[RMDB]
RNA sequence: GGGAACGACUCGAGUAGAGUCGAAAAUGGAUGAUCACGGGCGACAAGCAGGAGACCGCCAUCAACAUCGCCAUCGCGUGCAGGCUGGUGCACCACCCGGACAAUCUCAUAAUCAUCAAUGCGGCAGCCACGGUACAUCAUUCGUGAUGUACCGUGGAAAAGAAACAACAACAACAAC
Reactivity to DMS in 0.01 (KOAc 150mM, MgCl2 10mM, bicine 150mM(pH8.5), 24C), signal-to-noise 3, nucleotides 027 to 126: u000g010g010a080u010g010a050u020c090a100c060g030g020g000c020g020a080c120a100a090g010c070a080g010g000a110g010a140c080c060g000c040c050a070u000c070a060a100c060a070u010c060g010c020c030a080u010c140g030c120g010u010g030c040a030g010g020c040u000g030g020u000g000c030a080c030c030a140c020c020c020g000g010a130c110a040a090u000c030u000c040a080u000a040a100u010c030a040u010c100a050a070u000g000c060g020g000c080a100g000
Reactivity to 2A3 in 0.01 (KOAc 150mM, MgCl2 10mM, bicine 150mM(pH8.5), 24C), signal-to-noise 2, nucleotides 027 to 126: u100g040g010a020u050g000a020u060c060a040c120g020g020g000c020g030a060c050a130a020g090c020a040g060g060a050g040a020c010c020g010c010c000a060u110c030a030a070c000a070u070c030g000c050c030a050u090c120g000c020g020u020g020c020a020g060g000c050u150g010g030u020g000c030a020c030c000a020c000c020c020g030g000a030c030a040a090u000c040u020c060a060u170a120a040u080c000a020u060c020a040a070u100g030c030g080g000c040a020g060
Source information
The record gives the reactivity of an RNA of 177 nucleotides to DMS and 2A3. DMS adducts were read by reverse transcription with MarathonRT. Conditions: 150 mM KOAc, 10 mM MgCl2 and 150 mM bicine (pH 8.5), 24 C. Values cover nucleotides 27 to 126. For DMS, 1,818 sequencing reads were counted. 2A3 adducts were read by reverse transcription with SuperScript II with manganese.